[RMDB]
RNA sequence: GGGAACGACUCGAGUAGAGUCGAAAAUCUCUGUUUGUUGGGUGCGGCCCAUUAAAUAGUCCAAGGAGACAGAAAAAUAGUCUGCUAUUUUUAAAAGAUUCUCUACUUUAGGCGAAGAGGUAUCCCAGUUAGACCAAAAAUUCGUUUUUGGUCUAACAAAAGAAACAACAACAACAAC
Reactivity to DMS in 0.01 (KOAc 150mM, MgCl2 10mM, bicine 150mM(pH8.5), 24C), signal-to-noise 4, nucleotides 027 to 126: u010c000u000c020u010g020u010u000u020g000u000u000g000g010g010u010g020c150g000g020c020c000c010a040u000u000a020a050a040u020a090g000u000c030c080a090a140g010g000a050g010a040c090a170g010a010a030a020a030a030u000a020g010u030c200u030g010c010u000a000u000u010u000u030u010a060a120a080a160g010a130u030u010c000u000c000u010a090c090u010u010u010a100g010g000c020g010a100a030g000a080g000g000u000a080u000c000c010c000a220
Reactivity to 2A3 in 0.01 (KOAc 150mM, MgCl2 10mM, bicine 150mM(pH8.5), 24C), signal-to-noise 7, nucleotides 027 to 126: u020c000u000c000u010g030u010u080u020g060u010u020g010g010g010u070g070c110g130g140c010c000c000a010u030u030a010a030a030u060a020g020u040c020c010a050a040g040g000a020g010a010c020a030g240a020a050a010a010a010u020a010g050u050c100u110g140c010u090a050u010u020u000u070u090a110a180a020a020g040a070u140u020c000u000c000u030a150c040u060u080u080a070g040g000c030g020a040a010g010a010g020g020u040a050u020c000c000c000a000
This 177-nucleotide RNA was probed chemically with DMS and 2A3. It was measured as part of the RMDB libraries RFM100 and RFMREP. The RNA was probed in 150 mM KOAc, 10 mM MgCl2 and 150 mM bicine (pH 8.5) at 24 C. 2A3 adducts were read by reverse transcription with SuperScript II with manganese.